[RMDB]
RNA sequence: GGGAACGACUCGAGUAGAGUCGAAAAGAGUACCAGUACGACAUCGUAGUACGUCAUGGACUCGUACGAUCGAGCGGAUCUGAUCCAUGUCUGCAGAGCUAGUCACAUACGACUAUACUAUCAUGAGAGCUUAAACUCGGUUCGCCGAGUUUAAGCUAAAAGAAACAACAACAACAAC
Reactivity to DMS in 0.01 (KOAc 150mM, MgCl2 10mM, bicine 150mM(pH8.5), 24C), signal-to-noise 3, nucleotides 027 to 126: g000a040g000u000a080c040c030a070g000u000a070c070g000a110c100a090u000c100g030u020a110g000u010a030c080g050u000c080a110u010g000g000a030c080u000c020g000u000a090c100g010a050u010c050g020a120g010c110g000g000a100u000c040u010g020a070u000c020c030a070u020g030u010c030u000g010c090a080g000a090g050c160u000a020g020u000c010a090c170a110u020a050c150g010a050c000u010a030u000a070c050u010a030u000c090a040u010g030a270g000
Reactivity to 2A3 in 0.01 (KOAc 150mM, MgCl2 10mM, bicine 150mM(pH8.5), 24C), signal-to-noise 2, nucleotides 027 to 126: g050a030g000u020a140c020c000a020g030u100a000c050g080a050c050a130u110c110g030u060a020g040u020a070c060g020u020c020a040u050g000g020a020c030u010c030g030u050a080c080g010a060u040c020g030a020g100c040g010g070a050u010c050u040g030a020u000c010c000a010u060g020u010c040u050g000c040a020g010a030g100c010u010a000g020u060c040a040c030a250u170a070c080g000a010c040u000a000u000a090c020u040a010u150c050a070u120g110a060g000

Overview:
Structure probing data (DMS and 2A3) for a 177-nucleotide construct. The DMS profile rests on 1,635 reads. The RNA was probed in 150 mM KOAc, 10 mM MgCl2 and 150 mM bicine (pH 8.5) at 24 C. For 2A3 the reverse transcriptase was SuperScript II with manganese.